[RMDB]
RNA sequence: GGGAACGACUCGAGUAGAGUCGAAAAGAUAUGGAUGUGGAACUACGGUCGCACUAGGCGACGAAGAGAAGUGACCUCGGAAACGAGGUCACUUCUCAGAGCCUAAACGACCGCCACAUCCUAAGUCGACAUAACGUCAGUUCGCUGACGUUAUGUCAAAAGAAACAACAACAACAAC
Reactivity to DMS in 0.01 (KOAc 150mM, MgCl2 10mM, bicine 150mM(pH8.5), 24C), signal-to-noise 2, nucleotides 027 to 126: g040a070u000a290u000g000g010a000u010g000u000g020g030a140a040c160u030a300c070g000g000u000c000g000c170a060c300u000a020g010g020c000g000a140c230g010a130a140g000a010g000a000a020g000u000g040a000c000c000u000c040g000g030a030a030a200c000g010a000g030g000u000c000a000c000u000u000c000u000c020a000g010a160g000c000c000u010a050a030a160c010g010a020c040c030g000c000c010a000c000a000u030c010c020u000a000a040g020u000c060
Conditions: 150 mM KOAc, 10 mM MgCl2 and 150 mM bicine (pH 8.5), 24 C. The record gives the reactivity of an RNA of 177 nucleotides to DMS. For DMS the reverse transcriptase was MarathonRT. The DMS profile rests on 1,141 reads.